Background: The record gives the reactivity of an RNA of 177 nucleotides to DMS. DMS adducts were read by reverse transcription with MarathonRT.
RNA sequence: GGGAACGACUCGAGUAGAGUCGAAAAGAUAUGGAACUCUCUUAUCACGCAUAAGCUGACAUCGAUCGUACUGUCUCGGAAACGAGAUUACGGGAGUCACUAUGCGUGAUAAGAGAGUUCCUAAGUCCGUGCUGUAUUUGUUCGCAAAUACAGCACGAAAAGAAACAACAACAACAAC
Reactivity to DMS in 0.01 (KOAc 150mM, MgCl2 10mM, bicine 150mM(pH8.5), 24C), signal-to-noise 1, nucleotides 027 to 126: g000a120u020a300u010g000g000a020a000c000u000c010u000c000u010u000a020u000c000a010c000g040c000a000u000a020a040g030c230u010g090a010c000a270u030c150g010a120u010c010g000u000a030c300u020g020u000c000u000c000g010g000a100a110a270c010g000a010g000a030u000u000a020c030g010g000g030a040g030u000c010a030c000u010a010u000g000c000g040u000g010a000u000a000a010g010a000g000a000g000u000u000c000c000u000a020a070g010u010c000

Source: RMDB library TTRINS, as collected in RNAgym. In probing experiments dimethyl sulfate is read out at A N1 and C N3, which are open when not base-paired.